[RMDB]
RNA sequence: GGGAACGACUCGAGUAGAGUCGAAAACUCGCAUUUGUGGGUUCUCUUAAGCAAAAUACUUGCAUUAGGUCUCAGCUGGGGCUGUGCAUCAGGCGGUUUGAGAAAUAUUCAAUUCUCAGCAGAAGCCGCGAUCGGAUAUAUUCGUAUAUCCGAUCGCAAAAGAAACAACAACAACAAC
Reactivity to 2A3 in 0.01 (KOAc 150mM, MgCl2 10mM, bicine 150mM(pH8.5), 24C), signal-to-noise 2, nucleotides 027 to 126: c010u000c010g000c050a180u070u130u300g010u070g020g030g010u020u010c000u000c010u060u240a070a050g050c040a050a000a130a090u210a180c100u100u050g000c000a050u030u170a110g040g030u020c000u000c000a190g030c120u220g030g000g050g000c000u040g010u030g000c000a060u040c100a060g000g000c000g050g000u020u180u060g020a010g040a010a020a010u170a100u090u140c020a000a020u050u000c000u010c020a000g000c000a000g080a150a000g000c020c000
Reactivity to DMS in 0.01 (KOAc 150mM, MgCl2 10mM, bicine 150mM(pH8.5), 24C), signal-to-noise 1, nucleotides 027 to 126: c000u000c000g010c100a270u040u010u070g000u000g000g000g000u000u000c150u000c000u000u060a010a230g010c150a040a030a020a080u010a070c100u000u000g000c000a000u000u010a160g020g000u000c030u000c000a200g000c300u050g000g000g000g010c010u000g050u000g000c050a040u000c000a090g000g000c000g000g070u000u000u000g000a000g000a010a000a030u020a120u020u040c300a080a070u000u000c000u000c000a040g100c100a120g000a100a110g020c050c020
The record gives the reactivity of an RNA of 177 nucleotides to 2A3 and DMS. 2A3 adducts were read by reverse transcription with SuperScript II with manganese. It was measured as part of the RMDB library RFM100. As a SHAPE reagent, 2A3 marks flexible, mostly unpaired nucleotides at the ribose 2'-OH. For DMS the reverse transcriptase was MarathonRT.